[RMDB]
RNA sequence: GGGAACGACUCGAGUAGAGUCGAAAAACACAGAUUACGCUCCAGCUUACGCUAAAGCUGCGUGAGUUAAUCUCCUUUUGGAGCUGGACUGAUUAGAAUUUCUAGCGUUUUAAUCGCUCCAUAACCUUAAGCUAGACGCUUUUAAAAGGUGGUUCGCCAACCAAUAUACCUUCGGGUAUAUUGGUUGAAAAGAAACAACAACAACAAC
Reactivity to 2A3 in 0.01 (KOAc 150mM, MgCl2 10mM, bicine 150mM(pH8.5), 24C), signal-to-noise 5, nucleotides 027 to 156: a010c110a000c020a060g110a090u080u230a060c040g000c000u000c000c000a010g000c000u000u000a000c000g020c020u120a220a140a230g160c190u060g000c040g000u000g010a000g000u000u030a050a040u040c060u110c040c000u090u070u060u090g000g000a000g000c000u010g000g010a010c010u030g000a010u010u010a010g010a020a010u070u080u000c000u010a000g010c000g000u000u000u010u000a000a000u020c010g020c030u040c000c010a120u170a210a120c030c020u170u090a070a010g000c000u000a000g010a020c010g030c020u040u090u120u280a100a280a040a010g020g010u040g000g020u060u090c040g040c030
Reactivity to DMS in 0.01 (KOAc 150mM, MgCl2 10mM, bicine 150mM(pH8.5), 24C), signal-to-noise 2, nucleotides 027 to 156: a100c070a190c180a100g000a100u000u000a080c150g010c000u010c010c010a130g010c020u000u000a030c030g040c030u000a080a120a160g020c210u010g000c020g040u000g010a030g000u000u000a020a030u000c000u000c060c080u000u000u010u010g000g000a030g000c040u000g010g000a080c030u010g010a040u000u000a030g000a030a040u000u010u000c030u000a040g010c040g020u010u000u000u000a010a030u000c000g010c110u010c010c040a090u010a050a030c040c030u000u000a080a080g040c010u000a050g010a050c250g010c070u020u000u000u010a030a120a080a200g010g010u000g010g010u000u000c020g030c110

Structure probing data (2A3 and DMS) for a 207-nucleotide construct. The data come from the RNA Mapping Database (RMDB), library ARCHII. For 2A3 the reverse transcriptase was SuperScript II with manganese.